An RNA of 177 nucleotides, treated with DMS and 2A3 and read out base by base. 2A3 adducts were read by reverse transcription with SuperScript II with manganese. For 2A3, 177,143 sequencing reads were counted. The reactions ran in a buffer of 150 mM KOAc, 10 mM MgCl2 and 150 mM bicine (pH 8.5), at 24 C.
RNA sequence: GGGAACGACUCGAGUAGAGUCGAAAAUAACAGCGUUAUGGCGUGAGAACGUCAUGCAACUACUAAUCACUGUAUAGUAGUUGCAUUGUGUGAGAACACAAUGAUGCUGUUUAACAGUGAUUGAUACGAUCUUGACGUAUUUCGAUAUGUCGAGAUCAAAAGAAACAACAACAACAAC
Reactivity to DMS in 0.01 (KOAc 150mM, MgCl2 10mM, bicine 150mM(pH8.5), 24C), signal-to-noise 9, nucleotides 027 to 126: u020a010a000c000a000g010c000g020u000u000a020u000g010g010c000g010u000g000a260g000a140a010c000g010u000c000a010u000g000c000a010a000c000u000a000c000u000a050a110u010c000a010c010u010g010u000a260u000a010g000u000a000g000u000u000g000c000a000u000u000g010u000g000u000g010a260g000a200a020c000a000c000a010a010u000g010a000u000g000c000u000g000u000u000u010a070a040c000a000g010u000g010a250u040u030g010a110u040a100c230
Reactivity to 2A3 in 0.01 (KOAc 150mM, MgCl2 10mM, bicine 150mM(pH8.5), 24C), signal-to-noise 9, nucleotides 027 to 126: u090a000a000c000a000g000c000g000u000u000a010u010g000g000c000g000u020g040a080g030a050a010c000g000u000c000a000u000g000c000a000a000c000u000a000c000u010a010a020u070c000a000c010u010g000u020a040u010a050g000u000a000g000u000u000g000c000a000u000u000g000u000g000u010g060a100g040a060a010c010a000c000a000a000u000g000a000u010g000c000u000g000u000u000u020a010a000c000a000g010u010g050a090u080u180g080a060u100a130c110